This 207-nucleotide RNA was probed chemically with 2A3. The data come from the RNA Mapping Database (RMDB), library RSTRND.

RNA sequence: GGGAACGACUCGAGUAGAGUCGAAAAGCACAUGCAGUGCACCUCGGAGGCUCGGCUCCGUCAUCAACGGAACAGUUAAUAUAACUGCAAAGAACGAAAAUUCUUACGCUUUAGCUGCUUAAUAACCAGCUAGCGUGAUCCUUCCGACUUCGCUCAAGAAUCUAUUCGCGUUCGCGCGAAUAGAUUCAAAAGAAACAACAACAACAAC
Reactivity to 2A3 in 0.01 (KOAc 150mM, MgCl2 10mM, bicine 150mM(pH8.5), 24C), signal-to-noise 3, nucleotides 027 to 156: g020c020a030c010a010u300g140c100a040g030u020g000c020a030c000c010u000c000g000g000a010g010g000c100u090c300g020g010c000u020c000c000g070u030c010a000u000c000a000a000c010g000g000a000a010c000a000g010u030u060a210a070u190a200u070a180a050c030u070g070c130a030a060a100g050a060a030c050g120a040a080a020a130u170u070c040u140u140a020c010g030c000u080u120u170a000g000c010u010g010c000u070u040a030a020u030a050a050c020c000a000g000c000u020a010g000c000g000u000g010a010u050c000c020u040u100c020c030g030a080c040u120u060c120g020c020u020c060a090a070